[RMDB]
RNA sequence: GGGAACGACUCGAGUAGAGUCGAAAAACUCUGAGCGUAAUCGCGUCUUGACUAGACUAUAGGUGACGUGAGAAUCUAUCCCAUUGUGCAUAGCGAUGGGAUAAUACGCUGAUCUAUAGUCACGGAAAUCCUCAUCCUACUUCGGUAGGAUGAGGAUAAAAGAAACAACAACAACAAC
Reactivity to 2A3 in 0.01 (KOAc 150mM, MgCl2 10mM, bicine 150mM(pH8.5), 24C), signal-to-noise 2, nucleotides 027 to 126: a010c090u110c080u130g030a010g010c020g040u050a070a130u060c000g000c000g050u030c020u080u140g070a070c040u080a090g000a010c000u010a000u010a020g040g020u020g020a020c000g000u010g010a060g050a020a020u050c030u030a000u000c010c000c000a000u000u020g020u030g020c110a120u300a240g000c010g000a010u010g000g000g000a010u000a000a000u000a000c000g010c030u010g020a000u000c000u000a000u000a000g000u030c020a010c050g030g000a060a180
Reactivity to DMS in 0.01 (KOAc 150mM, MgCl2 10mM, bicine 150mM(pH8.5), 24C), signal-to-noise 2, nucleotides 027 to 126: a070c090u000c060u010g010a040g000c030g020u000a130a110u000c010g030c010g000u000c020u010u000g010a120c100u000a090g000a000c000u000a020u000a000g000g000u000g000a020c050g000u000g010a060g010a080a060u010c240u000a010u010c000c000c000a030u000u000g010u010g000c300a080u020a130g010c010g000a010u000g000g000g000a000u000a000a130u000a200c000g000c040u000g000a070u010c020u000a000u010a010g020u000c010a140c150g000g010a050a100